[RMDB]
RNA sequence: GGGAACGACUCGAGUAGAGUCGAAAAUGCAGCCGACAAGUGCAGGGGGCGCUUGAAGCUGGUAGUGACAGACAUCCGCGGCUUCCAGCUAGCAUACAUCGAUGACUUUGCGACAAAGGAUGAGGUCACAAGGAAGGUGAUUCGUCACCUUCCUUGUAAAAGAAACAACAACAACAAC
Reactivity to 2A3 in 0.01 (KOAc 150mM, MgCl2 10mM, bicine 150mM(pH8.5), 24C), signal-to-noise 2, nucleotides 027 to 126: u070g010c000a000g060c000c020g030a070c020a050a000g020u030g030c100a130g040g020g010g000g000c020g000c000u030u070g030a020a000g010c000u010g050g000u050a030g010u010g090a060c050a120g150a080c020a080u040c040c060g000c020g020g020c000u010u060c040c020a030g030c000u020a020g010c000a040u060a080c010a090u110c040g040a020u020g030a040c050u060u090u170g040c030g030a040c050a050a130a020g010g030a050u060g020a020g040g030u020c020
Reactivity to DMS in 0.01 (KOAc 150mM, MgCl2 10mM, bicine 150mM(pH8.5), 24C), signal-to-noise 4, nucleotides 027 to 126: u000g020c020a200g010c010c020g010a140c070a030a060g020u010g010c060a110g020g000g000g010g020c040g010c010u000u010g000a250a110g020c010u010g010g010u000a030g020u010g000a130c080a110g010a120c070a030u010c080c040g010c070g010g020c030u000u010c010c000a030g000c030u000a070g000c040a030u000a110c150a130u010c050g000a060u000g000a090c050u000u000u000g010c070g000a030c110a080a080a120g000g010a040u010g000a120g010g010u010c050